Source information:
This 177-nucleotide RNA was probed chemically with DMS. The DMS profile rests on 1,023 reads.

[RMDB]
RNA sequence: GGGAACGACUCGAGUAGAGUCGAAAAGAUAUGGAGAGCGGGAGCGGACACUAUAGCGUCGGAAACGACGCUACGAAUGGUCGCGAAGAACGCUCUCCUAAGUCAAACGGGGGCUUCGGCCCCCGAAGAGCAUUAUCCUGUUCGCAGGAUAAUGCUCAAAAGAAACAACAACAACAAC
Reactivity to DMS in 0.01 (KOAc 150mM, MgCl2 10mM, bicine 150mM(pH8.5), 24C), signal-to-noise 1, nucleotides 027 to 126: g020a060u000a300u010g000g010a010g010a030g000c000g000g040g000a060g020c000g010g000a000c010a030c070u000a180u000a010g010c000g050u000c010g000g010a070a160a180c000g000a020c000g010c000u010a000c060g030a090a010u010g010g010u000c010g010c000g000a150a080g000a030a180c010g000c010u010c010u000c000c000u000a000a070g000u010c020a060a090a120c060g000g060g030g010g010c000u000u000c160g030g000c000c010c000c000c020g010a010a010
Description: Conditions: 150 mM KOAc, 10 mM MgCl2 and 150 mM bicine (pH 8.5), 24 C. For DMS the reverse transcriptase was MarathonRT.